[RMDB]
RNA sequence: GGGAACGACUCGAGUAGAGUCGAAAACACCCCCGGGUGUCCCCCCAGGAAUGGCGGGACCCCACUCGACAGGGUCCGCGUACCAUCCUUUCUUACCUGAUGGCCGGCAUGGUCCCAGCCUCCUCGCCCUUAGGUAAUUGUUCGCAAUUACCUAAGGAAAAGAAACAACAACAACAAC
Reactivity to 2A3 in 0.01 (KOAc 150mM, MgCl2 10mM, bicine 150mM(pH8.5), 24C), signal-to-noise 1, nucleotides 027 to 126: c020a000c010c010c000c020c080g100g000g000u050g040u060c000c010c000c020c010c020a010g020g020a120a050u060g000g020c030g000g000g010a000c030c000c010c000a020c020u130c040g110a060c050a050g010g000g050u000c010c000g110c020g040u020a040c000c000a000u030c010c000u050u130u080c010u040u040a130c020c000u000g070a050u040g070g030c050c000g050g000c040a060u040g000g000u000c010c000c000a010g030c030c040u010c000c000u000c010g030c000
Reactivity to DMS in 0.01 (KOAc 150mM, MgCl2 10mM, bicine 150mM(pH8.5), 24C), signal-to-noise 2, nucleotides 027 to 126: c030a080c050c000c010c220c290g030g020g020u000g010u000c020c030c010c030c000c030a050g020g000a050a050u020g010g030c060g000g000g010a010c000c010c030c060a090c110u000c150g010a150c200a160g010g000g010u000c000c020g020c090g010u010a090c030c010a020u000c010c050u010u010u010c070u010u010a110c160c070u000g000a030u010g000g040c030c050g010g000c090a080u000g010g000u010c020c000c000a130g000c000c000u000c010c020u010c030g020c140